[RMDB]
RNA sequence: GGGAACGACUCGAGUAGAGUCGAAAAUCACCUACAAUAGUGUGCAAUGGCCUUAGCUAAAAGCUCUAGACAACUUGGGUUAUGAGGGGCAUAUUUGUCUGCUGCUAUUGGGAGGGGCUGCAGUGAACCCGUAGAACGGAUUCGUCCGUUCUACGGGAAAAGAAACAACAACAACAAC
Reactivity to 2A3 in 0.01 (KOAc 150mM, MgCl2 10mM, bicine 150mM(pH8.5), 24C), signal-to-noise 1, nucleotides 027 to 126: u090c030a040c070c030u040a030c060a030a050u050a060g020u010g000u020g040c020a070a130u060g110g000c000c030u130u040a110g030c030u090a170a080a000a000g000c000u020c010u070a080g030a130c070a150a160c080u070u110g090g000g000u130u080a120u180g000a060g000g000g000g050c010a030u090a170u160u170u090g040u020c030u060g000c010u020g000c000u020a040u060u090g000g030g040a020g040g000g040g000c050u090g000c030a060g150u030g190a090a070
Reactivity to DMS in 0.01 (KOAc 150mM, MgCl2 10mM, bicine 150mM(pH8.5), 24C), signal-to-noise 1, nucleotides 027 to 126: u010c120a120c010c010u000a070c110a070a030u000a020g000u000g010u000g070c050a080a030u010g020g000c000c070u020u010a080g020c080u000a040a060a100a120g000c030u020c020u000a090g000a090c190a080a060c040u000u010g000g000g010u020u000a100u050g010a180g030g000g010g040c000a050u000a120u000u000u000g000u010c060u000g000c020u000g010c020u010a030u010u040g000g000g000a120g000g000g000g010c050u010g000c080a010g020u000g050a170a150